An RNA of 177 nucleotides, treated with 2A3 and DMS and read out base by base. For DMS, 1,548 sequencing reads were counted.
RNA sequence: GGGAACGACUCGAGUAGAGUCGAAAAUUAAUCUCUUUUUACACUGGCUUUGUGUGUCACUAACCUGAUAAACUUACCAGUUAGAAAAUGAGUCUGUGAAAGAGUACCAAUCCACAGAAGCUUGGUGCCGUUAUGAACUGUUCGCAGUUCAUAACGGAAAAGAAACAACAACAACAAC
Reactivity to 2A3 in 0.01 (KOAc 150mM, MgCl2 10mM, bicine 150mM(pH8.5), 24C), signal-to-noise 1, nucleotides 027 to 126: u090u010a070a070u030c010u000c000u040u000u010u010u040a090c090a020c050u030g060g080c180u040u070u020g040u010g020u000g010u000c010a020c020u020a020a020c000c020u010g000a030u040a050a090a010c000u030u010a020c010c010a000g000u010u010a000g010a060a030a010a040u070g000a000g060u000c030u070g050u060g060a120a130a120g070a020g030u060a030c000c040a000a050u000c030c020a040c000a090g100a210a030g100c020u030u110g040g000u050g030
Reactivity to DMS in 0.01 (KOAc 150mM, MgCl2 10mM, bicine 150mM(pH8.5), 24C), signal-to-noise 2, nucleotides 027 to 126: u000u010a090a150u010c000u000c000u000u000u000u000u000a110c200a020c000u000g010g020c120u000u000u000g000u000g020u020g010u000c020a040c030u010a140a140c260c230u000g000a010u000a010a040a010c020u000u000a050c000c000a010g000u000u010a180g010a020a000a040a020u030g000a000g010u000c040u000g030u000g020a090a040a080g000a080g020u000a100c030c030a040a100u000c070c020a080c090a110g020a130a160g000c140u000u000g000g020u000g010

2A3 adducts were read by reverse transcription with SuperScript II with manganese. It was measured as part of the RMDB library OK2TST.